This 207-nucleotide RNA was probed chemically with 2A3. The 2A3 profile rests on 599 reads. The RNA was probed in 150 mM KOAc, 10 mM MgCl2 and 150 mM bicine (pH 8.5) at 24 C.
RNA sequence: GGGAACGACUCGAGUAGAGUCGAAAAUGUUUGAGCAGGACUUUGGGUCCCUAACCUGCAACUCAGCACUCAGUCCAUCAUGGGCUUUGCUAGUCUCUGUGACUUCUCCAGGGCAGGAAAGUGACAGGUUUCUGCGCAAGGGAGCCCGAGGUACCUACCGUACGUCCUAGUUCGCUAGGACGUACGGAAAAGAAACAACAACAACAAC
Reactivity to 2A3 in 0.01 (KOAc 150mM, MgCl2 10mM, bicine 150mM(pH8.5), 24C), signal-to-noise 2, nucleotides 027 to 156: u170g040u020u020u070g060a020g000c060a010g010g000a010c000u000u060u060g020g000g000u020c000c000c000u000a000a030c020c000u000g000c000a030a010c040u090c090a010g000c000a010c040u180c090a020g000u000c050c010a110u170c070a160u300g000g000g000c000u040u020u000g000c000u040a040g070u040c010u000c000u160g080u070g120a040c000u130u000c040u030c180c080a110g100g020g000c020a020g050g000a020a000a000g020u020g040a020c020a020g010g010u030u160u130c120u230g010c060g000c090a000a040g000g100g000a140g180c000c000c000g010a000g080g030u260a300c000c000u000a020